This 177-nucleotide RNA was probed chemically with DMS. For DMS the reverse transcriptase was MarathonRT. The reactions ran in a buffer of 150 mM KOAc, 10 mM MgCl2 and 150 mM bicine (pH 8.5), at 24 C. It was measured as part of the RMDB library OK2TRN.
RNA sequence: GGGAACGACUCGAGUAGAGUCGAAAAGGAGGAUCACUUGAGCCUGGGAGGUCAAGGCUAUAGUGAGCCAUGAUCGUACUGCUGCACUCCAGCCUGGGCCAUAGAGCAAGACGCUAUCUCAAAAAAAUCUUAGGCUCUAGUUCGCUAGAGCCUAAGAAAAAGAAACAACAACAACAAC
Reactivity to DMS in 0.01 (KOAc 150mM, MgCl2 10mM, bicine 150mM(pH8.5), 24C), signal-to-noise 1, nucleotides 027 to 126: g010g010a000g000g000a170u000c030a010c080u000u000g000a090g030c040c020u000g010g000g000a120g000g030u020c060a110a040g040g040c030u020a080u010a040g000u010g010a050g000c030c100a120u000g000a040u000c040g010u000a060c070u000g000c090u000g030c010a020c050u000c070c010a050g040c000c040u000g000g000g000c000c020a080u050a090g000a050g010c110a080a050g000a050c080g010c020u030a060u000c010u010c020a000a020a010a110a050a040a060